[RMDB]
RNA sequence: GGGAACGACUCGAGUAGAGUCGAAAAGCUAAGGAGGGAUGAACCGGGCCAGGGGUGAAAACCAGCAGCCAAGAGUUCCCGUGGUAGGCAGUAGUGGGAUAGCGUACCGGAGUGAACUGCCGUUAUCAGCUCAACCAACAUGGUUGGACCACAAUCUCUGAAUAGCAUGGUUCGCCAUGCUAUUCAGAAAAGAAACAACAACAACAAC
Reactivity to 2A3 in 0.01 (KOAc 150mM, MgCl2 10mM, bicine 150mM(pH8.5), 24C), signal-to-noise 2, nucleotides 027 to 156: g060c050u050a050a060g020g000a010g010g020g060a070u040g020a060a090c060c060g020g000g000c000c090a050g000g000g000g060u060g060a050a040a010a030c020c030a030g120c020a010g000c000c040a020a050g070a000g040u010u000c000c000c000g010u030g000g020u020a060g000g020c020a010g020u130a010g010u080g040g030g050a070u070a080g020c030g000u010a020c010c010g030g010a030g040u100g050a050a030c020u040g040c000c000g000u040u000a070u080c040a010g000c000u020c040a030a060c000c020a030a190c130a300u150g000g000u000u030g030g030a020c000c000a010c010a080a110u110c020u000